The record gives the reactivity of an RNA of 177 nucleotides to 2A3 and DMS. DMS adducts were read by reverse transcription with MarathonRT. The 2A3 profile rests on 4,344 reads. The RNA was probed in 150 mM KOAc, 10 mM MgCl2 and 150 mM bicine (pH 8.5) at 24 C.

[RMDB]
RNA sequence: GGGAACGACUCGAGUAGAGUCGAAAAGAUAUGGAUCACUAGGACAUGCGCGACUCGGAAACGAGUCUGCAACAGCCUAAUGAUCCUAAGUCAAAGAUCGCUACAUCCUUCGGGAUGUAGCGAUCAACAGAUGUUUCCUGUUCGCAGGAAACAUCUGAAAAGAAACAACAACAACAAC
Reactivity to 2A3 in 0.01 (KOAc 150mM, MgCl2 10mM, bicine 150mM(pH8.5), 24C), signal-to-noise 2, nucleotides 027 to 126: g030a010u030a010u090g000g000a010u010c000a010c020u010a020g010g060a130c060a300u130g000c010g050c070g030a020c000u000c010g000g020a030a020a010c000g000a000g010u010c000u020g000c000a080a080c050a030g010c000c010u000a030a010u020g000a000u000c000c000u000a020a010g040u030c020a140a000a160g010a010u020c010g020c010u020a000c020a010u010c010c020u040u170c300g150g000g000a010u000g000u000a000g000c000g000a000u010c010a010a000
Reactivity to DMS in 0.01 (KOAc 150mM, MgCl2 10mM, bicine 150mM(pH8.5), 24C), signal-to-noise 2, nucleotides 027 to 126: g020a020u000a300u000g010g010a010u010c000a000c050u000a000g000g010a070c080a090u010g010c300g000c080g000a010c000u000c000g000g000a100a060a130c000g020a010g000u000c010u020g050c020a070a110c100a150g000c000c000u000a000a020u010g010a000u000c010c000u010a010a050g000u000c010a070a050a130g010a000u000c000g000c000u000a000c000a000u000c000c000u000u020c220g010g030g000a000u000g000u000a000g020c000g000a000u000c000a020a140